[RMDB]
RNA sequence: GGGAACGACUCGAGUAGAGUCGAAAACGCCCAUGUGCUACGGAAAGGGUCUCACUUUAAGUGGGCUACACUAAAUAAUCUCCGUCUGGGGUUAGUUAGAAGAGCUUAAUCAGACUAGCUGAAUGGAAGCCUGUUACCGGGCUGAUGUUUAUGCGAACGCCAUAUACAUGUUCGCAUGUAUAUGGCGAAAAGAAACAACAACAACAAC
Reactivity to DMS in 0.01 (KOAc 150mM, MgCl2 10mM, bicine 150mM(pH8.5), 24C), signal-to-noise 3, nucleotides 027 to 156: c070g020c000c000c010a190u000g040u010g010c070u000a110c020g000g010a080a100a100g000g010g010u000c020u000c050a050c030u000u010u010a110a130g030u000g010g010g030c020u000a110c050a090c000u000a010a030a030u000a010a030u000c020u010c010c130g020u010c100u000g050g000g010g040u000u000a010g010u000u010a020g010a150a140g010a150g020c030u000u000a070a120u000c030a070g010a060c020u000a130g000c010u000g000a020a050u000g010g000a220a070g030c050c010u020g000u000u000a180c200c050g050g010g040c010u000g020a220u000g010u000u000u000a080u010g010c040g000a060a160
Reactivity to 2A3 in 0.01 (KOAc 150mM, MgCl2 10mM, bicine 150mM(pH8.5), 24C), signal-to-noise 8, nucleotides 027 to 156: c080g020c000c010c020a020u140g050u080g020c030u040a070c050g070g080a100a060a090g150g020g040u010c050u070c040a060c030u070u140u200a210a070g010u030g000g000g000c010u030a020c020a000c020u020a010a010a040u020a010a020u010c010u020c040c040g080u010c020u060g010g000g000g000u010u000a010g000u010u010a010g020a150a020g010a060g030c080u130u190a020a030u130c000a010g010a030c010u020a010g010c000u010g000a010a010u010g010g030a020a010g000c000c000u090g110u300u120a160c170c100g000g010g000c010u000g010a010u030g000u000u010u020a130u240g010c010g010a060a010

The record gives the reactivity of an RNA of 207 nucleotides to DMS and 2A3. For 2A3 the reverse transcriptase was SuperScript II with manganese. The data come from the RNA Mapping Database (RMDB), library ARCHII. The RNA was probed in 150 mM KOAc, 10 mM MgCl2 and 150 mM bicine (pH 8.5) at 24 C. The DMS profile rests on 4,941 reads.